[RMDB]
RNA sequence: GGGAACGACUCGAGUAGAGUCGAAAAACUUGAGGUAUUAUCAUUUUUGGUGAACGUGAGUCCCUGAAUCGUCUGUAACAUAUCCGCUGUCAAAACCGAACCGGACACCGCCUCCUCCCCAGUGUCGUCGUUGCUGAUUCGCUUCCGGACCAUGCUAGUACCUCCAUGUAUUCGUACAUGGAGGUACAAAAGAAACAACAACAACAAC
Reactivity to DMS in 0.01 (KOAc 150mM, MgCl2 10mM, bicine 150mM(pH8.5), 24C), signal-to-noise 1, nucleotides 027 to 156: a110c070u000u000g010a090g020g020u000a040u000u000a060u000c050a100u000u000u010u010u010g030g000u000g060a080a160c040g010u010g000a140g020u000c010c030c010u020g010a090a080u000c040g030u000c030u000g030u020a030a080c060a080u010a100u000c040c010g000c040u010g000u000c040a040a030a050a150c100c050g030a040a030c070c020g000g010a060c070a090c020c000g010c050c030u000c060c040u000c020c040c020c070a100g010u000g010u000c000g010u000c020g000u000u000g020c020u000g000a100u000u000c030g000c030u000u010c010c000g020g000a090c000c060a120u010g020c070u000a260
Reactivity to 2A3 in 0.01 (KOAc 150mM, MgCl2 10mM, bicine 150mM(pH8.5), 24C), signal-to-noise 1, nucleotides 027 to 156: a020c060u090u070g010a010g080g060u080a040u170u110a110u150c060a110u130u190u030u080u190g120g000u090g020a140a050c020g020u040g080a070g020u070c050c000c000u000g050a000a070u080c010g070u070c020u010g100u110a120a020c050a080u140a070u050c000c000g040c120u030g050u130c030a040a160a110a110c050c010g010a020a050c010c000g050g030a010c030a010c040c030g020c020c010u000c000c010u050c000c030c000c010a050g000u060g020u020c010g010u000c000g040u040u020g020c020u020g000a120u050u050c060g020c050u050u000c050c010g040g000a050c030c000a020u130g010c010u090a020